Conditions: 150 mM KOAc, 10 mM MgCl2 and 150 mM bicine (pH 8.5), 24 C. An RNA of 177 nucleotides, treated with 2A3 and DMS and read out base by base.
[RMDB]
RNA sequence: GGGAACGACUCGAGUAGAGUCGAAAAGGUGAGGGAAGACUUGAUCCAUACUGGGGGGAUGUCAAGCAGGACUUGGUGUCAUACUGUGGGCCUUGGAAGUUGGAUGCAGCUUGGGAUGGACUCAGCGUGUGAGAAUACGGUUCGCCGUAUUCUCACAAAAAGAAACAACAACAACAAC
Reactivity to 2A3 in 0.01 (KOAc 150mM, MgCl2 10mM, bicine 150mM(pH8.5), 24C), signal-to-noise 4, nucleotides 027 to 126: g070g040u150g070a090g000g020g010a010a060g000a050c020u070u110g060a030u070c050c000a020u080a110c100u070g000g010g030g000g020g000a010u050g050u070c030a010a020g010c030a050g040g060a120c010u070u100g060g010u030g020u080c010a040u050a120c020u020g000u070g010g020g050c000c050u030u030g050g050a040a050g060u110u060g050g000a060u070g010c010a010g010c010u030u090g030g000g040a050u090g020g010a030c030u020c050a020g020c030g050
Reactivity to DMS in 0.01 (KOAc 150mM, MgCl2 10mM, bicine 150mM(pH8.5), 24C), signal-to-noise 4, nucleotides 027 to 126: g010g000u000g010a050g020g000g000a060a070g000a100c130u030u020g000a100u020c030c080a070u020a080c100u020g000g000g000g000g000g020a050u000g000u020c050a070a060g010c040a090g020g010a130c050u010u020g000g010u010g000u040c040a090u030a140c120u020g030u010g010g000g010c070c060u020u030g000g020a050a070g000u010u020g000g000a150u010g030c080a030g000c050u000u000g000g020g000a060u020g000g010a080c050u010c030a050g000c160g020
Background:
Values cover nucleotides 27 to 126. 2A3 adducts were read by reverse transcription with SuperScript II with manganese. The data come from the RNA Mapping Database (RMDB), library OK1LIB.